An RNA of 177 nucleotides, treated with 2A3 and read out base by base.
The RNA was probed in 150 mM KOAc, 10 mM MgCl2 and 150 mM bicine (pH 8.5) at 24 C.
RNA sequence: GGGAACGACUCGAGUAGAGUCGAAAACGCAAGCGCACUCUGUGUCGCAUUCGAAAACCUCAUGUGAUUACAAUUUGUAAGUUUGCCAGAGUAAGGUGUAGCUUCUUAUCCAUAUGAUUAGAUUCCUGCCGACUAUCGGAUUCGUCCGAUAGUCGGCAAAAGAAACAACAACAACAAC
Reactivity to 2A3 in 0.01 (KOAc 150mM, MgCl2 10mM, bicine 150mM(pH8.5), 24C), signal-to-noise 2, nucleotides 027 to 126: c060g000c000a110a020g050c000g010c000a000c020u130c110u080g050u020g020u040c030g000c000a060u080u030c000g060a160a000a170a160c050c070u000c050a000u030g000u060g080a210u140u080a030c040a040a100u130u110u020g020u000a100a050g000u080u120u100g010c000c000a000g070a010g040u200a170a000g010g000u020g010u020a000g000c020u000u000c000u000u140a040u040c000c100a000u070a000u200g050a060u000u030a010g120a200u030u130c030c030u000